Chemical mapping of a 177-nucleotide RNA with DMS and 2A3. Source: RMDB libraries RFM100 and RFMREP, as collected in RNAgym. DMS adducts were read by reverse transcription with MarathonRT.
RNA sequence: GGGAACGACUCGAGUAGAGUCGAAAAAAAAGAUUCAAAGUAGCGGUUUGAGCGAUGUGUAUAGACAGUAACCCGGUAAAAUGUACUGAAAAUAGGGAUAAGAGUUGAACAGGUGCAAAGUGAAUAACAGAAUACACUUUUUCGAAAGUGUAUUCUGAAAAGAAACAACAACAACAAC
Reactivity to DMS in 0.01 (KOAc 150mM, MgCl2 10mM, bicine 150mM(pH8.5), 24C), signal-to-noise 6, nucleotides 027 to 126: a030a040a060a090g000a080u010u000c060a070a040a080g010u000a060g020c040g020g010u010u010u000g000a080g010c090g010a060u000g020u020g000u010a050u020a070g010a130c040a050g000u010a080a070c050c010c010g020g020u020a040a050a060a070u010g000u010a040c050u010g010a040a030a050a070u010a060g010g000g000a060u020a040a070g000a080g010u010u010g020a050a060c070a050g010g020u000g010c080a040a050a080g010u010g000a080a050u010a030a140
Reactivity to 2A3 in 0.01 (KOAc 150mM, MgCl2 10mM, bicine 150mM(pH8.5), 24C), signal-to-noise 3, nucleotides 027 to 126: a000a000a000a000g150a050u100u050c030a060a050a040g050u060a040g050c030g000g110u030u080u140g030a000g010c020g020a030u050g010u000g000u020a030u040a100g080a030c040a030g040u040a050a040c010c000c000g000g040u100a100a110a010a020u100g020u030a050c050u030g080a010a000a080a100u100a050g020g010g000a000u010a090a070g020a000g010u060u090g010a080a010c020a070g070g010u030g030c020a020a010a100g090u070g040a080a060u100a080a010